[RMDB]
RNA sequence: GGGAACGACUCGAGUAGAGUCGAAAAUGUUGAUGGUCUAUAUCUGCCACAACCGCACUGUCAUUCACCAUCGAGUGCCAAAUGAAGAGGACCCUUCAUUAGAUCGCCCUUUUAUUUCAGAGGGUACGGCGCACGACCAGUUCGCUGGUCGUGCGCCAAAAGAAACAACAACAACAAC
Reactivity to 2A3 in 0.01 (KOAc 150mM, MgCl2 10mM, bicine 150mM(pH8.5), 24C), signal-to-noise 1, nucleotides 027 to 126: u240g000u060u070g000a300u000g000g000u040c030u000a220u000a000u090c210u060g000c000c000a000c000a040a000c030c030g000c000a060c000u090g120u030c000a250u000u120c000a060c070c000a000u030c090g010a180g100u030g030c040c040a000a020a070u000g000a040a150g010a070g030g020a160c070c070c000u010u010c000a000u000u240a030g040a240u070c000g000c000c000c000u000u300u000u000a200u060u180u070c090a160g010a150g120g120g000u000a000c000

Structure probing data (2A3) for a 177-nucleotide construct. The RNA was probed in 150 mM KOAc, 10 mM MgCl2 and 150 mM bicine (pH 8.5) at 24 C. Source: RMDB library OK1LIB, as collected in RNAgym.